Annotation: An RNA of 177 nucleotides, treated with 2A3 and DMS and read out base by base. DMS adducts were read by reverse transcription with MarathonRT. 2A3 adducts were read by reverse transcription with SuperScript II with manganese. It was measured as part of the RMDB libraries RFM100 and RFMREP. Conditions: 150 mM KOAc, 10 mM MgCl2 and 150 mM bicine (pH 8.5), 24 C.

RNA sequence: GGGAACGACUCGAGUAGAGUCGAAAAACGGAUGGCGGUGAUAGGAGUAACGGCUGGUUGGCACAGCCAUCGACGUUCCUGUUUGACAAUGAAACUGGUGCGUUCGCACCUCAAGAACAGGCUACGUAGAUCCCAAUAUUUUCGAAUAUUGGGAUCUAAAAGAAACAACAACAACAAC
Reactivity to 2A3 in 0.01 (KOAc 150mM, MgCl2 10mM, bicine 150mM(pH8.5), 24C), signal-to-noise 9, nucleotides 027 to 126: a000c050g050g010a040u030g020g020c030g000g020u020g020a050u080a090g080g050a050g060u080a090a040c050g080g000c030u040g050g090u080u080g050g000c030a010c010a050g000c010c000a020u040c030g040a020c010g010u010u010c000c000u000g020u010u020u040g070a070c090a100a110u180g100a170a080a050c110u080g000g000u010g010c030g110u210u260c100g000c000a010c000c000u000c030a040a030g010a010a000c000a010g020g000c070u030a010c020g020u010
Reactivity to DMS in 0.01 (KOAc 150mM, MgCl2 10mM, bicine 150mM(pH8.5), 24C), signal-to-noise 9, nucleotides 027 to 126: a080c080g010g000a030u000g000g020c020g000g020u000g010a080u020a100g000g000a110g010u020a090a100c250g010g010c050u000g010g010u010u010g000g000c040a070c030a050g010c020c010a040u010c050g010a090c000g000u000u000c000c000u000g000u000u000u010g010a130c230a110a110u020g000a080a090a110c150u020g000g010u000g010c000g010u020u040c200g000c010a010c000c000u000c120a050a150g000a020a010c010a020g000g010c140u000a030c050g010u000